[RMDB]
RNA sequence: GGGAACGACUCGAGUAGAGUCGAAAAGUGCGAGGUCUACCUAUACUUUCGAUGGUUGAAGUCGAACAUGAGACCUGUAACUUAGGUUCGUUAUGAAGUUAUAGCUAGAACCAUCUACCUCGCUGAAGAUAUAGUGGCAUUUCGAUGUUACUAUAUCAAAAGAAACAACAACAACAAC
Reactivity to 2A3 in 0.01 (KOAc 150mM, MgCl2 10mM, bicine 150mM(pH8.5), 24C), signal-to-noise 9, nucleotides 027 to 126: g080u050g000c000g010a000g010g010u010c020u030a040c010c000u020a010u020a040c020u020u050u050c020g000a000u020g050g070u080u100g100a070a010g020u030c010g020a030a010c010a050u080g010a020g020a040c000c000u010g040u050a060a040c010u020u050a010g030g000u050u040c020g040u060u060a030u090g060a060a020g020u060u040a040u020a030g010c010u000a000g020a040a020c010c000a010u000c010u020a010c000c000u000c000g000c010u010g040a060a020
Reactivity to DMS in 0.01 (KOAc 150mM, MgCl2 10mM, bicine 150mM(pH8.5), 24C), signal-to-noise 9, nucleotides 027 to 126: g020u020g010c000g000a010g000g010u000c020u000a030c190c010u000a020u010a020c050u010u000u000c020g010a030u010g010g010u040u030g010a120a210g010u000c020g010a030a090c050a030u000g010a070g000a040c020c020u010g010u030a080a110c250u030u040a020g000g000u010u010c070g010u020u020a030u010g000a110a050g000u030u010a010u000a020g000c140u000a020g000a060a190c090c080a070u030c120u020a150c000c000u000c000g010c000u010g010a120a100

The record gives the reactivity of an RNA of 177 nucleotides to 2A3 and DMS. Source: RMDB library OK1LIB, as collected in RNAgym. Conditions: 150 mM KOAc, 10 mM MgCl2 and 150 mM bicine (pH 8.5), 24 C. As a SHAPE reagent, 2A3 marks flexible, mostly unpaired nucleotides at the ribose 2'-OH. Values cover nucleotides 27 to 126. The 2A3 profile rests on 86,009 reads. 2A3 adducts were read by reverse transcription with SuperScript II with manganese. For DMS the reverse transcriptase was MarathonRT.